[RMDB]
RNA sequence: GGGAACGACUCGAGUAGAGUCGAAAACAUGAACCUCUUUGAUCUUCCACAAGGGGUAGGCUACGGGUGAAACCUCUUAGGCUAAUACUUCUAUGAAGAGAUGCCUUGGAUAGGGUAACAGCGGCGGGCUGAUAGGCCUUUUCGAAGGCCUAUCAGCAAAAGAAACAACAACAACAAC
Reactivity to 2A3 in 0.01 (KOAc 150mM, MgCl2 10mM, bicine 150mM(pH8.5), 24C), signal-to-noise 3, nucleotides 027 to 126: c080a070u120g070a060a050c000c000u010c040u060u050u070g180a170u050c110u160u050c050c000a030c050a040a010g020g000g030g010u010a030g080g000c020u030a030c090g020g030g030u110g030a110a010a020c010c000u020c020u040u010a000g010g000c000u010a100a000u120a170c020u020u000c050u070a120u300g020a020a000g000a010g000a000u090g000c000c000u040u050g020g010a080u080a070g080g000g020u090a070a020c000a040g030c010g080g010c010g020g080
Reactivity to DMS in 0.01 (KOAc 150mM, MgCl2 10mM, bicine 150mM(pH8.5), 24C), signal-to-noise 1, nucleotides 027 to 126: c050a250u000g000a040a020c000c000u000c000u000u000u000g020a080u000c060u050u030c010c090a160c080a040a050g000g000g000g010u020a040g010g020c030u020a110c060g000g000g000u030g040a090a030a030c040c010u000c000u000u000a020g010g000c000u010a050a110u000a070c000u000u000c000u000a130u030g010a000a000g000a020g010a240u070g000c050c000u000u000g000g040a030u000a000g020g010g000u040a040a140c140a030g030c110g050g000c090g000g000